Annotation:
Source: RMDB library OK2TST, as collected in RNAgym. Structure probing data (2A3 and DMS) for a 177-nucleotide construct.
[RMDB]
RNA sequence: GGGAACGACUCGAGUAGAGUCGAAAAUUCACUGGUUACUUUGCUGACACCAACAGAAGAGCCCUGAUUAGCCGGUUUUACAAACAGUGGUAACCCCAGUUUAGACUCCACUUCGGCAAAACUAAUGUCACUGUACUUUGUUCGCAAAGUACAGUGAAAAAGAAACAACAACAACAAC
Reactivity to 2A3 in 0.01 (KOAc 150mM, MgCl2 10mM, bicine 150mM(pH8.5), 24C), signal-to-noise 1, nucleotides 027 to 126: u030u030c020a000c110u010g050g000u070u160a060c000u110u080u110g080c020u030g060a060c020a040c090c080a100a010c060a060g050a110a030g040a040g030c040c000c010u020g030a150u000u130a010g000c020c020g040g100u120u060u060u140a050c080a100a110a000c030a050g030u020g040g000u030a000a010c030c040c010c000a020g000u100u130u020a120g040a040c050u000c030c000a050c000u140u210c020g010g000c000a050a030a030a030c040u060a050a180u190g030
Reactivity to DMS in 0.01 (KOAc 150mM, MgCl2 10mM, bicine 150mM(pH8.5), 24C), signal-to-noise 2, nucleotides 027 to 126: u010u020c010a060c060u000g010g010u000u000a030c070u000u000u010g000c030u000g010a090c100a120c120c050a060a150c060a060g000a090a120g000a130g050c050c020c100u000g000a080u000u000a080g030c060c040g030g000u000u000u000u020a060c170a100a060a090c150a060g000u010g000g000u000a090a170c070c030c010c060a060g000u000u050u000a110g000a080c070u000c000c020a010c070u000u020c060g040g010c070a060a030a040a120c150u000a040a160u000g000
The 2A3 profile rests on 639 reads.
For 2A3 the reverse transcriptase was SuperScript II with manganese.
Reactivities are rounded to 0.1 and cut off at 0 and 3.